RNA sequence: GGGAACGACUCGAGUAGAGUCGAAAAGAUAUGGACCAGGGUGCCUUCGACGAUCUGGUCUCGGAAACGAGACCAGGGAGAAGACACCUGGUCCUAAGUCAAAGAUAGCCGGUUCGCCGGCUAUCAACUACGUACGAAUCUUCGGAUUCGUACGUAGAAAAGAAACAACAACAACAAC
Reactivity to 2A3 in 0.01 (KOAc 150mM, MgCl2 10mM, bicine 150mM(pH8.5), 24C), signal-to-noise 1, nucleotides 027 to 126: g010a010u090a040u120g010g020a050c020c010a010g150g120g120u080g080c060c070u010u030c030g300a300c020g000a070u000c010u010g000g000u020c000u000c010g000g000a060a040a010c010g000a000g000a010c010c010a010g010g000g000a000g010a030a000g030a010c010a070c020c000u010g040g000u020c000c000u000a000a000g000u000c020a020a010a130g010a000u020a010g000c000c050g000g130u070u140c300g100c130c020g000g070c000u010a000u000c000a000a000
Reactivity to DMS in 0.01 (KOAc 150mM, MgCl2 10mM, bicine 150mM(pH8.5), 24C), signal-to-noise 1, nucleotides 027 to 126: g000a040u010a300u000g000g030a010c020c000a050g010g050g010u000g010c010c010u010u000c000g000a110c250g000a070u010c000u000g010g000u000c010u000c010g000g000a160a110a190c000g000a020g000a000c000c010a000g000g000g010a010g020a010a010g010a020c000a020c000c020u010g010g000u000c010c000u020a020a080g000u000c010a130a130a240g000a010u000a010g000c000c000g010g000u000u020c270g000c020c010g010g010c000u000a010u000c000a090a160
Notes
Conditions: 150 mM KOAc, 10 mM MgCl2 and 150 mM bicine (pH 8.5), 24 C. The record gives the reactivity of an RNA of 177 nucleotides to 2A3 and DMS. For DMS, 1,158 sequencing reads were counted. For 2A3, 1,955 sequencing reads were counted. For DMS the reverse transcriptase was MarathonRT.